[RMDB]
RNA sequence: GGGAACGACUCGAGUAGAGUCGAAAAGGGGUCUUUAGGAGGAUCUUGUGAGGGAGAAAUACUGAAGCCUCCACGGUAUUUCAUCGAUCUCACAUAGGAUCCGCGAAACUAAAGACGGAGGCACCCAAAUCGGGUCUCGAUUCGUCGAGACCCGAAAGCUAAUUUAAUGCUUCGGCAUUAAAUUAGCAAAAGAAACAACAACAACAAC
Reactivity to 2A3 in 0.01 (KOAc 150mM, MgCl2 10mM, bicine 150mM(pH8.5), 24C), signal-to-noise 1, nucleotides 027 to 156: g000g010g000g050u030c020u000u020u010a000g010g030a100g000g000a000u000c000u070u050g000u000g010a010g000g020g010a080g000a020a020a000u030a000c030u060g040a180a020g000c000c000u000c000c020a010c020g000g000u000a020u000u030u030c080a190u300c060g030a020u000c000u010c010a000c020a010u100a010g210g000a000u000c010c000g000c070g130a100a020a000c000u010a000a000a000g000a010c040g000g010a000g010g000c000a010c000c000c010a040a130a010u030c000g010g000g000u020c000u000c000g020a020u080u090c110g040u000c000g080a010g030a000c010c000c010g010a020a000a000